[RMDB]
Background
The data come from the RNA Mapping Database (RMDB), library TTRDES. This 177-nucleotide RNA was probed chemically with DMS and 2A3. Conditions: 150 mM KOAc, 10 mM MgCl2 and 150 mM bicine (pH 8.5), 24 C. 2A3 adducts were read by reverse transcription with SuperScript II with manganese. Values cover nucleotides 27 to 126. The 2A3 profile rests on 6,595 reads.
RNA sequence: GGGAACGACUCGAGUAGAGUCGAAAAGAUAUGGAGCUGGGUAGACAUGCUCUCACCUCGGAAACGAGGUACGCGAGAGCAACAGCUAUUAGCUCCUAAGUCAAAACCGUGUUGUUCGCAACACGGAGUCACGGAAUAUGUUCGCAUAUUCCGUGACAAAAGAAACAACAACAACAAC
Reactivity to DMS in 0.01 (KOAc 150mM, MgCl2 10mM, bicine 150mM(pH8.5), 24C), signal-to-noise 3, nucleotides 027 to 126: g010a020u010a200u000g000g010a000g000c010u010g020g040g020u000a000g000a050c080a300u000g020c010u000c000u000c000a080c010c000u000c000g020g000a030a030a090c000g000a010g000g020u000a010c300g020c300g010a020g000a020g010c000a130a050c110a180g010c000u000a000u000u000a020g020c000u000c000c000u000a020a070g000u000c010a140a110a190a210c010c000g000u000g020u010u000g010u000u010c240g040c020a010a010c000a000c010g010g020a030
Reactivity to 2A3 in 0.01 (KOAc 150mM, MgCl2 10mM, bicine 150mM(pH8.5), 24C), signal-to-noise 3, nucleotides 027 to 126: g010a010u020a020u060g010g000a000g000c040u070g210g030g070u010a010g030a060c110a300u300g020c010u000c010u000c000a000c010c010u000c010g000g000a020a030a010c000g000a010g010g020u030a080c240g030c090g010a000g010a000g010c070a140a050c050a020g000c010u000a010u000u070a000g020c000u000c000c000u000a050a000g010u000c020a030a030a120a180c000c010g000u010g010u000u000g060u030u080c300g000c140a010a000c000a000c000g000g010a050